[RMDB]
RNA sequence: GGGAACGACUCGAGUAGAGUCGAAAAUAUCACACACGCUCCACCGUGCUCAUGAGGCAGGUCUGGAAAGGGUGGAGUUACCUCAAAAUCCAGAAGUACAAGAGAACAAGAGGGAAGGAAGGGUGGAAGGGAUAUUAUGAUUCGUCAUAAUAUCCCUAAAAGAAACAACAACAACAAC
Reactivity to 2A3 in 0.01 (KOAc 150mM, MgCl2 10mM, bicine 150mM(pH8.5), 24C), signal-to-noise 5, nucleotides 027 to 126: u070a020u050c020a010c000a000c000a000c120g010c020u010c010c000a000c020c000g120u060g030c020u030c060a150u150g040a130g070g000c030a010g020g100u010c030u050g020g040a080a080a040g050g000g000u010g020g000a010g030u010u070a030c000c020u070c030a080a060a020a080u040c020c010a030g020a070a020g060u110a050c040a100a030g040a010g020a130a000c020a050a030g030a020g040g030g010a030a010g040g050a030a010g030g010g010u070g010g040a050
Reactivity to DMS in 0.01 (KOAc 150mM, MgCl2 10mM, bicine 150mM(pH8.5), 24C), signal-to-noise 8, nucleotides 027 to 126: u010a070u010c070a090c090a110c100a080c140g000c070u000c010c010a020c030c000g020u000g010c040u000c080a120u010g010a180g010g020c040a060g010g010u000c040u000g000g000a060a080a100g010g010g010u000g010g000a050g010u000u010a040c040c020u000c070a050a060a090a120u000c040c030a050g000a060a090g020u000a060c130a050a090g000a060g000a070a060c130a060a090g010a050g000g000g000a080a060g010g000a050a050g000g000g010u000g020g020a140